[RMDB]
RNA sequence: GGGAACGACUCGAGUAGAGUCGAAAAGGGGGGGACCGUCGGGUCCGUGGGAUGCCCUUCCCGAUUCCGUCCAUCCCCACCCCCGGGUGUCCCCCCAGGAAUGGCGGGACCCCACUCGACAGGGUCCAAAGUCCGAGGUUCGCCUCGGACAAAAGAAACAACAACAACAAC
Reactivity to 2A3 in 0.01 (KOAc 150mM, MgCl2 10mM, bicine 150mM(pH8.5), 24C), signal-to-noise 4, nucleotides 027 to 129: g000g000g000g000g000g000g000a000c030c000g170u100c020g010g000g000u030c050c070g040u040g000g010g010a010u060g020c020c000c010u030u010c010c000c000g010a040u130u000c070c010g030u020c030c000a050u060c020c010c000c010a020c020c030c000c000c010g030g010g030u180g000u000c000c000c000c000c000c000a010g020g080a060a070u090g070g020c060g030g010g000a000c000c000c000c000a080c040u150c010g100a030c040a050g030g000g000u020c010c000a050a020a000
Reactivity to DMS in 0.01 (KOAc 150mM, MgCl2 10mM, bicine 150mM(pH8.5), 24C), signal-to-noise 5, nucleotides 027 to 129: g030g180g010g030g000g010g000a010c000c000g090u050c080g020g010g040u020c120c300g010u000g000g010g030a080u030g000c080c030c060u000u000c010c040c020g010a100u000u000c070c060g010u050c120c040a060u020c030c010c020c030a070c070c150c010c000c020g010g000g010u050g030u040c000c000c000c000c000c000a000g020g010a090a140u060g010g040c120g000g000g000a050c010c000c000c020a070c000u090c010g050a000c110a130g000g020g010u040c040c000a010a020a030
Structure probing data (2A3 and DMS) for a 170-nucleotide construct. Values are in units of 0.01, from 0 to 300, in steps of 10. For 2A3 the reverse transcriptase was SuperScript II with manganese. Source: RMDB library 15KLIB, as collected in RNAgym.